[RMDB]
RNA sequence: GGGAACGACUCGAGUAGAGUCGAAAAGAUAUGGAUGACUUACUAAGACAGCUUCGGGUUCGGAAACGAACCCAAGCAAUGACGGUACGGGUCAUCCUAAGUCAAACCUUAAACUUCGGUUUAAGGAGUUCCACUAUUACUUCGGUAAUAGUGGAACAAAAGAAACAACAACAACAAC
Reactivity to DMS in 0.01 (KOAc 150mM, MgCl2 10mM, bicine 150mM(pH8.5), 24C), signal-to-noise 3, nucleotides 027 to 126: g000a040u010a140u020g000g010a020u000g020a000c010u000u000a040c030u010a150a170g000a190c180a120g000c010u000u000c210g020g000g010u010u000c000g020g000a050a030a060c010g040a000a000c000c000c010a000a000g020c000a190a080u010g000a140c300g030g010u010a020c300g010g000g000u000c000a000u010c000c000u000a030a090g000u010c010a190a120a140c000c000u000u000a010a000a010c000u000u010c180g020g010u010u000u000a000a000g010g000a100
Reactivity to 2A3 in 0.01 (KOAc 150mM, MgCl2 10mM, bicine 150mM(pH8.5), 24C), signal-to-noise 3, nucleotides 027 to 126: g010a010u040a020u100g010g010a000u010g020a000c000u020u100a030c020u160a130a280g260a250c070a080g070c000u060u090c200g030g000g000u000u010c000g010g000a010a020a010c010g000a000a010c000c000c000a010a000g000c010a020a120u190g060a090c160g010g010u090a080c190g130g000g000u010c000a010u000c000c010u010a030a000g000u010c010a070a060a190c000c000u000u000a020a010a010c020u060u080c300g170g000u010u000u000a020a000g000g030a020
Structure probing data (DMS and 2A3) for a 177-nucleotide construct. The 2A3 profile rests on 6,203 reads. Reactivities are given for positions 27 through 126. 2A3 adducts were read by reverse transcription with SuperScript II with manganese.